[RMDB]
RNA sequence: GGGAACGACUCGAGUAGAGUCGAAAAUGGUAUUUCGAUACCACACAUACCUUUGUGCAGCGACAUGCUCGAUGACUUGCGUGAUCCCAUUGGGAUCACGACCCAAGUCUAAGAGCAACAGCGCUGCACUCUGGUCGACGCCUAGGUUCGCCUAGAAUUGUACGACAAAAUUCGUUUUGUCGUACAAAAAAGAAACAACAACAACAAC
Reactivity to DMS in 0.01 (KOAc 150mM, MgCl2 10mM, bicine 150mM(pH8.5), 24C), signal-to-noise 2, nucleotides 027 to 156: u010g000g010u000a000u000u000u010c240g030a100u000a010c010c000a040c060a150c130a170u020a100c010c020u000u000u020g060u000g040c010a040g010c020g010a110c090a300u000g000c000u000c010g000a300u000g010a060c000u010u000g000c020g020u000g050a030u000c000c020c000a300u000u000g030g030g020a010u010c010a000c000g000a020c190c220c000a030a050g000u000c000u010a200a290g000a030g000c010a020a050c090a060g020c000g000c010u000g030c010a000c000u000c030u000g000g010u000c070g000a090c090g000c050c060u000a090g050g010u000u010c090g010c020c010u010a090g010a050a160
Reactivity to 2A3 in 0.01 (KOAc 150mM, MgCl2 10mM, bicine 150mM(pH8.5), 24C), signal-to-noise 5, nucleotides 027 to 156: u070g000g000u010a030u050u180u130c270g040a020u030a010c020c010a030c010a000c000a110u250a070c000c010u010u010u000g000u010g000c000a000g000c000g050a140c100a130u050g000c010u000c000g050a050u230g000a000c000u000u000g010c000g010u000g000a010u020c010c010c070a300u240u300g010g000g000a000u000c000a000c010g010a010c010c010c000a000a010g010u020c010u030a120a020g000a000g010c000a000a000c010a000g000c000g020c000u000g010c010a000c000u000c000u000g000g020u020c050g090a060c100g100c030c010u010a010g040g010u070u060c160g050c070c020u030a050g070a070a070